[RMDB]
RNA sequence: GGGAACGACUCGAGUAGAGUCGAAAAGUGUUUUUGGUAAACAGUCGGGAGGGACUCUUUGCUGAGACCACAUCGCUGUGGCACACCUUAUCGCGAACUUACGGUGCUAGUUUGCAGAGUUCCUUAAGUCAUGACUUCGGUUCGCCGAAGUCAUGACAAAAGAAACAACAACAACAAC
Reactivity to 2A3 in 0.01 (KOAc 150mM, MgCl2 10mM, bicine 150mM(pH8.5), 24C), signal-to-noise 1, nucleotides 027 to 126: g040u030g070u050u030u030u110u000g020g030u030a020a080a020c040a080g060u030c030g060g000g150a090g020g130g010a060c000u040c000u090u020u040g040c100u010g010a010g020a050c020c010a010c000a000u110c040g000c090u030g040u030g020g000c000a000c000a000c050c020u110u090a040u160c070g000c000g040a030a010c050u120u150a030c120g020g010u000g010c020u020a050g140u040u170u220g030c020a020g010a040g030u000u020c010c010u060u120a070a020
Reactivity to DMS in 0.01 (KOAc 150mM, MgCl2 10mM, bicine 150mM(pH8.5), 24C), signal-to-noise 1, nucleotides 027 to 126: g000u000g000u010u000u010u010u000g030g010u000a010a020a020c050a000g020u010c060g010g010g010a140g000g000g000a060c010u000c120u000u010u010g020c040u000g010a050g000a150c020c030a020c050a080u000c170g010c130u020g020u000g020g000c080a200c070a000c000c020u000u020a070u000c110g040c040g000a020a000c090u000u000a060c190g000g050u010g000c080u000a050g010u000u000u000g030c010a030g020a110g010u000u010c000c000u000u030a030a150